The record gives the reactivity of an RNA of 207 nucleotides to 2A3 and DMS.
The data come from the RNA Mapping Database (RMDB), library OK3TST.
Reactivities are rounded to 0.1 and cut off at 0 and 3.
DMS adducts were read by reverse transcription with MarathonRT.
The 2A3 profile rests on 1,817 reads.
Conditions: 150 mM KOAc, 10 mM MgCl2 and 150 mM bicine (pH 8.5), 24 C.
[RMDB]
RNA sequence: GGGAACGACUCGAGUAGAGUCGAAAAAAAAUUAGCCAGGUGUGGUGGCACACACCUCUAGUCCCAGCUACUUGGAAGGCUGAGGUGGGAGGAUCACUUGAGCUCAGGAGGUCAAGGCUGCAGUGAGCCAUGAUUAUGCCACUGCACUCCAGCCUGAGCUCAUAGGCUGAUUCGUCAGCCUAUGAGCAAAAGAAACAACAACAACAAC
Reactivity to 2A3 in 0.01 (KOAc 150mM, MgCl2 10mM, bicine 150mM(pH8.5), 24C), signal-to-noise 3, nucleotides 027 to 156: a000a000a000a000u080u040a020g030c030c010a020g000g020u030g000u020g030g010u020g020g020c020a000c000a000c000a020c060c000u000c020u050a030g040u050c000c000c000a020g050c090u170a120c110u120u060g080g000a200a080g100g000c010u010g010a010g010g020u020g020g050g020a100g030g050a050u120c020a020c050u050u040g020a020g020c000u020c020a020g000g040a030g060g030u100c070a050a040g060g020c030u030g000c010a070g040u000g050a020g030c020c020a040u050g020a120u100u280a050u140g010c000c000a010c020u020g000c000a010c000u000c000c010a020g010c000c000u010g010a000
Reactivity to DMS in 0.01 (KOAc 150mM, MgCl2 10mM, bicine 150mM(pH8.5), 24C), signal-to-noise 2, nucleotides 027 to 156: a040a020a030a090u000u010a020g030c030c020a060g050g050u000g050u000g000g020u000g010g000c120a160c010a050c020a050c010c000u000c020u010a160g010u000c000c000c010a100g030c110u010a030c100u000u000g020g000a070a110g020g000c010u000g000a030g010g020u000g040g000g000a100g000g010a120u000c040a050c070u000u000g010a060g020c010u000c030a090g000g000a300g030g010u000c030a040a060g020g020c180u000g010c010a100g020u000g010a080g020c030c060a060u000g000a190u000u010a130u000g020c030c010a020c030u000g000c000a010c000u010c020c010a140g000c020c000u000g000a090